[RMDB]
RNA sequence: GGGAACGACUCGAGUAGAGUCGAAAAGUGUGCUAUACUAGUAAGGUUGAAUGAAUCAACCCUUGGUGCUUAGCUUCUUUCACCAAGCAUAUUACACGCGGAUAACCGCCAAAAGAGAAAAGAUGAACUGCCCGACGAUUCUUCGGAAUCGUCGGAACUUACACGUUGUCUUCGGACAACGUGUAAGAAAAGAAACAACAACAACAAC
Reactivity to 2A3 in 0.01 (KOAc 150mM, MgCl2 10mM, bicine 150mM(pH8.5), 24C), signal-to-noise 4, nucleotides 027 to 156: g040u040g010u000g020c050u080a050u060a300c060u070a080g150u110a080a110g020g000u020u030g020a120a170u140g100a060a200u090c000a000a020c010c000c010u000u000g010g000u020g010c070u070u060a020g030c000u090u060c010u030u100u010c020a020c000c000a000a000g000c020a050u030a040u200u170a010c070a030c080g020c000g000g010a080u090a200a170c000c000g010c020c020a050a090a070a020g090a030g020a050a090a020a030g060a040u110g040a040a080c030u120g080c040c000c000g000a000c000g000a000u000u000c000u020u050c150g060g000a000a000u000c010g000u000c000g010g000a000a000
Reactivity to DMS in 0.01 (KOAc 150mM, MgCl2 10mM, bicine 150mM(pH8.5), 24C), signal-to-noise 1, nucleotides 027 to 156: g040u010g030u010g000c050u000a090u000a160c080u000a140g010u010a140a100g030g040u010u000g000a040a160u000g010a200a260u000c000a040a020c000c020c060u000u000g000g000u000g010c070u000u010a030g000c030u000u000c010u000u030u000c000a110c010c010a050a050g020c100a120u000a060u000u000a050c070a070c000g010c040g060g040a240u030a130a180c010c010g000c030c070a060a050a080a160g000a140g000a060a080a090a110g010a020u010g000a040a140c030u010g030c100c030c000g000a020c010g010a020u000u000c010u020u000c270g000g020a000a000u000c000g010u000c000g010g010a000a020